Structure probing data (DMS and 2A3) for a 207-nucleotide construct. The RNA was probed in 150 mM KOAc, 10 mM MgCl2 and 150 mM bicine (pH 8.5) at 24 C. For DMS the reverse transcriptase was MarathonRT.

RNA sequence: GGGAACGACUCGAGUAGAGUCGAAAACCAAUAAUUGGAUUUCCAAUCCAAUUUCGGUAAUAAAUAGAUGUGCAUAGUUAAACCGAUCAUUAAAAUAAUGAAUAGUGUCUAAAGUUAGACCCGAAGCCUGGUGAUCUUACUAUAGUCAGGACUAUAAGAUAGAGUACUUGUUCGCAAGUACUCUAUCAAAAGAAACAACAACAACAAC
Reactivity to DMS in 0.01 (KOAc 150mM, MgCl2 10mM, bicine 150mM(pH8.5), 24C), signal-to-noise 2, nucleotides 027 to 156: c010c010a040a040u010a040a040u000u000g000g020a010u000u000u000c190c170a140a160u000c000c000a030a040u000u000u000c080g010g030u000a090a170u000a110a040a110u000a140g020a090u000g010u000g020c030a090u000a130g030u010u000a070a050a080c040c020g030a120u000c000a060u000u000a040a120a090a190u000a070a050u000g000a050a110u010a050g020u000g000u000c020u010a060a100a130g010u000u010a070g010a080c010c010c030g000a040a080g040c030c040u000g010g020u010g000a080u000c010u000u000a090c060u000a070u000a060g000u010c020a090g010g010a090c010u000a050u000a040a200
Reactivity to 2A3 in 0.01 (KOAc 150mM, MgCl2 10mM, bicine 150mM(pH8.5), 24C), signal-to-noise 3, nucleotides 027 to 156: c000c010a010a060u190a040a010u010u000g010g000a000u090u060u010c100c070a020a030u000c000c010a000a000u010u000u080c020g010g020u060a100a020u040a140a190a020u140a060g100a090u140g060u110g110c050a060u040a160g040u060u110a110a100a040c020c020g020a030u050c010a010u040u160a130a120a100a140u200a040a050u050g040a030a080u090a070g040u030g030u010c030u010a000a090a040g030u060u030a010g000a030c000c010c030g040a090a030g200c060c170u100g030g010u070g050a150u000c020u050u050a010c010u030a030u010a080g050u060c030a060g070g050a010c000u050a020u030a180a030
For 2A3, 2,046 sequencing reads were counted.